[RMDB]
RNA sequence: GGGAACGACUCGAGUAGAGUCGAAAAGUAAUGAAAGACUCCACAUAUCAUUAGCUGCAGCAGGACAGAAGCUUGUUUCUCUGUCUCAACAGUUCCGAGUAUAAGUAGUCCAGGGCUCACAUGGAUGGGGUCUGCUUGAUGAUGGGACCUCAGCUCACGUAGCCUAUACUUUCGAGUAUAGGCUACGAAAAGAAACAACAACAACAAC
Reactivity to 2A3 in 0.01 (KOAc 150mM, MgCl2 10mM, bicine 150mM(pH8.5), 24C), signal-to-noise 2, nucleotides 027 to 156: g040u040a100a050u100g080a130a060a030g080a030c040u010c040c040a080c020a090u190a020u120c060a100u120u110a040g010c040u070g030c060a010g010c030a040g050g030a010c010a030g040a080a040g060c070u080u050g050u060u150u020c010u000c000u000g030u040c030u000c060a050a170c020a040g030u090u030c010c040g040a020g050u110a060u050a130a050g050u040a010g030u000c020c000a010g020g040g000c010u010c050a040c010a020u090g040g000a030u050g000g000g000g030u000c020u020g060c000u040u170g060a120u050g020a050u050g010g000g040a020c000c000u020c010a010g010c070u100c030a020
Reactivity to DMS in 0.01 (KOAc 150mM, MgCl2 10mM, bicine 150mM(pH8.5), 24C), signal-to-noise 1, nucleotides 027 to 156: g050u020a110a090u000g000a090a070a190g000a050c010u010c070c030a080c040a100u000a090u000c040a090u000u000a040g030c040u000g000c040a090g000c130a170g020g010a060c010a050g000a080a100g010c150u000u020g020u000u000u000c000u000c010u010g000u000c030u000c010a010a040c040a060g000u010u000c040c040g000a090g050u000a080u000a100a090g030u000a080g010u010c000c000a130g010g000g010c030u000c070a060c050a110u010g010g010a090u010g010g000g000g020u000c010u000g000c010u000u000g030a130u010g000a150u020g000g010g000a020c000c000u010c020a080g000c080u000c040a180